[RMDB]
The record gives the reactivity of an RNA of 207 nucleotides to 2A3. As a SHAPE reagent, 2A3 marks flexible, mostly unpaired nucleotides at the ribose 2'-OH. The RNA was probed in 150 mM KOAc, 10 mM MgCl2 and 150 mM bicine (pH 8.5) at 24 C. It was measured as part of the RMDB library OK3TST.
RNA sequence: GGGAACGACUCGAGUAGAGUCGAAAAGAUGAUAUUAAAACAACGCAAUCCUUUCAAUGAUCCGUCAAAAAACAUUUCGGUUAUUUUUCGAAACCUGGGACGAUGUCCUUUAGACAAAAAUCGAAUAAAGUGUUGCGACCUGAAGUAUGGCGGCAACUGAACUUGGUAGGUUCGCCUACCAAGUUCAAAAAGAAACAACAACAACAAC
Reactivity to 2A3 in 0.01 (KOAc 150mM, MgCl2 10mM, bicine 150mM(pH8.5), 24C), signal-to-noise 1, nucleotides 027 to 156: g000a030u080g100a070u070a200u070u170a090a300a020a210c110a100a000c060g030c040a000a190u120c010c000u200u190u240c140a210a250u090g030a100u170c000c000g000u030c050a000a000a000a000a050a240c070a060u020u020u020c030g000g060u000u010a230u080u160u000u030u050c040g000a060a030a030c020c260u030g050g000g070a030c100g300a170u300g030u010c000c000u040u100u140a000g000a030c000a000a020a060a000a000u000c000g000a000a020u100a070a060a000g030u060g020u170u000g010c060g080a070c010c010u010g000a110a000g070u010a060u000g000g010c000g040g040c000a000a030c030
2A3 adducts were read by reverse transcription with SuperScript II with manganese.